Chemical mapping of a 177-nucleotide RNA with 2A3 and DMS. The reactions ran in a buffer of 150 mM KOAc, 10 mM MgCl2 and 150 mM bicine (pH 8.5), at 24 C. Values cover nucleotides 27 to 126. Source: RMDB library TTRDEL, as collected in RNAgym. DMS adducts were read by reverse transcription with MarathonRT. The 2A3 profile rests on 5,668 reads. The DMS profile rests on 3,142 reads.
RNA sequence: GGGAACGACUCGAGUAGAGUCGAAAAGAUAUGGACGAAUACAGCGAGGUACAGCAAGUCGGAAACGACACUGUACUACCCACCGCUGUUCGUCCUAAGUCAAAAGAAACGGCUUCGGCCGUUUCAAUCAUGUUAUCUCGUUCGCGAGAUAACAUGAAAAAGAAACAACAACAACAAC
Reactivity to 2A3 in 0.01 (KOAc 150mM, MgCl2 10mM, bicine 150mM(pH8.5), 24C), signal-to-noise 2, nucleotides 027 to 126: g030a000u060a030u110g000g000a010c010g020a070a020u280a170c010a000g010c010g080a110g200g000u000a000c000a010g030c130a300a110g000u010c010g000g000a040a040a010c010g020a000c030a000c040u000g000u010a000c000u010a020c040c010c010a070c030c010g000c000u000g020u010u000c010g000u000c010c000u030a040a030g020u020c020a030a010a010a210g000a000a000a000c000g000g020c030u120u180c300g180g040c000c000g000u010u000u010c000a010a010
Reactivity to DMS in 0.01 (KOAc 150mM, MgCl2 10mM, bicine 150mM(pH8.5), 24C), signal-to-noise 4, nucleotides 027 to 126: g010a030u010a300u010g010g020a020c010g010a050a070u010a080c020a000g010c000g020a060g040g010u000a020c000a010g010c170a080a080g010u000c000g000g000a090a040a090c000g030a010c000a080c000u000g000u000a010c010u000a040c080c070c090a300c190c010g000c010u000g010u000u000c000g010u000c000c000u010a010a060g020u000c040a110a060a110a070g000a000a010a010c000g020g020c010u000u000c210g020g000c000c000g000u000u000u000c000a100a140